Chemical mapping of a 177-nucleotide RNA with 2A3 and DMS. For DMS, 3,823 sequencing reads were counted. The 2A3 profile rests on 2,754 reads. Conditions: 150 mM KOAc, 10 mM MgCl2 and 150 mM bicine (pH 8.5), 24 C. The data come from the RNA Mapping Database (RMDB), library OK2TST.

RNA sequence: GGGAACGACUCGAGUAGAGUCGAAAAAACAGCCAGUAUUGGAGCAAUUGCCUCUGCCGCACUUCGCCCAUCAUCUGGUUCGUGGAUGGCACCGGACUUUAAUUUCAUUAGAAUUUCGGGCGGGGAACGACUAUAGUGGAUUCGUCCACUAUAGUCGAAAAGAAACAACAACAACAAC
Reactivity to 2A3 in 0.01 (KOAc 150mM, MgCl2 10mM, bicine 150mM(pH8.5), 24C), signal-to-noise 3, nucleotides 027 to 126: a010a000c010a010g000c010c000a020g020u050a100u070u110g050g010a220g030c040a060a040u040u070g010c010c020u110c140u160g110c080c030g000c000a020c030u030u020c090g000c000c010c020a020u060c010a030u000c020u030g010g000u040u030c040g020u040g050g060a110u080g120g000c040a050c090c000g040g000a010c000u060u070u120a060a110u130u210u040c090a060u050u190a060g020a230a070u070u110u120c050g010g000g000c040g000g000g010g030a010a020
Reactivity to DMS in 0.01 (KOAc 150mM, MgCl2 10mM, bicine 150mM(pH8.5), 24C), signal-to-noise 4, nucleotides 027 to 126: a100a040c060a050g020c000c000a030g020u000a090u000u010g010g000a150g030c030a070a040u010u000g000c020c030u000c130u000g010c130c150g010c030a050c170u000u000c140g020c020c000c010a050u010c150a080u010c040u000g010g000u000u000c130g020u000g010g000a120u020g010g010c040a090c030c000g020g010a040c130u000u000u010a040a050u010u000u000c150a100u020u000a070g010a040a070u000u000u000c050g010g010g010c020g010g000g000g000a150a200